RNA sequence: GGGAACGACUCGAGUAGAGUCGAAAAAGUUAUGAGUUCGCUCAUAACUACAGCGAAAGGCGCUCGGACCCGCAGUCCGCCGAACGCAUCCCAGCCUGUCCAAGUUGGUAUAUUUCGAUAUACCAAAUAUGGAAGGAUUUUUCGAAAUCCUUCCAUAAAAAGAAACAACAACAACAAC
Reactivity to DMS in 0.01 (KOAc 150mM, MgCl2 10mM, bicine 150mM(pH8.5), 24C), signal-to-noise 3, nucleotides 027 to 126: a060g010u000u000a000u000g000a020g000u010u010c230g020c000u000c000a010u000a000a000c010u000a070c170a070g000c020g000a040a100a180g010g000c020g010c070u010c070g000g000a110c070c090c110g010c090a120g020u000c070c030g020c020c010g010a070a140c040g010c030a130u010c010c010c000a180g010c090c080u010g000u010c170c090a060a110g000u000u000g000g000u000a010u000a000u000u000u010c160g000a010u000a000u010a000c000c000a020a030a060
Reactivity to 2A3 in 0.01 (KOAc 150mM, MgCl2 10mM, bicine 150mM(pH8.5), 24C), signal-to-noise 2, nucleotides 027 to 126: a000g020u000u000a020u000g000a000g030u010u070c170g080c070u010c010a000u000a010a000c000u010a010c020a020g000c000g060a100a050a040g060g010c030g030c060u080c130g120g060a100c030c020c080g050c060a010g020u030c020c020g000c000c000g010a040a000c020g000c000a030u010c000c020c000a000g020c020c040u120g100u050c050c020a140a100g080u030u020g030g000u010a000u000a000u020u100u040c210g050a010u000a000u010a060c000c000a000a000a000